[RMDB]
RNA sequence: GGGAACGACUCGAGUAGAGUCGAAAAUUAAAGAGCGUAGCACACACUCAGACUAAGUCUGACACACACAUACGGUAAUCAUCUCUGUGUGUGUUCGAGAUAUCGAUAAGUGUAUGAGAUGAAAAAAGACCUACUAAAAGUUCGCUUUUAGUAGGUCAAAAGAAACAACAACAACAAC
Reactivity to DMS in 0.01 (KOAc 150mM, MgCl2 10mM, bicine 150mM(pH8.5), 24C), signal-to-noise 5, nucleotides 027 to 126: u010u010a090a120a110g010a110g010c020g010u000a030g020c090a050c060a040c020a060c110u000c000a030g010a030c040u010a130a160g020u000c000u000g000a050c010a010c010a010c000a000c000a060u010a020c040g000g010u010a110a120u000c010a010u000c000u000c060u000g020u000g000u000g020u000g000u010u010c040g000a020g000a140u020a070u000c010g000a040u010a050a120g020u000g000u000a060u010g000a020g010a010u010g000a000a050a100a080a120a130
Reactivity to 2A3 in 0.01 (KOAc 150mM, MgCl2 10mM, bicine 150mM(pH8.5), 24C), signal-to-noise 4, nucleotides 027 to 126: u180u100a080a060a010g120a030g090c030g020u040a000g040c030a000c000a000c000a000c040u000c010a000g010a020c050u190a270a030g030u000c010u010g000a000c000a000c000a000c000a000c000a030u040a030c040g170g060u140a120a070u040c010a000u000c000u000c000u010g000u000g000u010g000u000g010u020u010c000g020a010g010a050u150a070u140c020g010a010u020a140a040g000u020g000u030a030u050g000a010g000a000u010g000a070a060a000a000a030a050
Structure probing data (DMS and 2A3) for a 177-nucleotide construct. For 2A3 the reverse transcriptase was SuperScript II with manganese.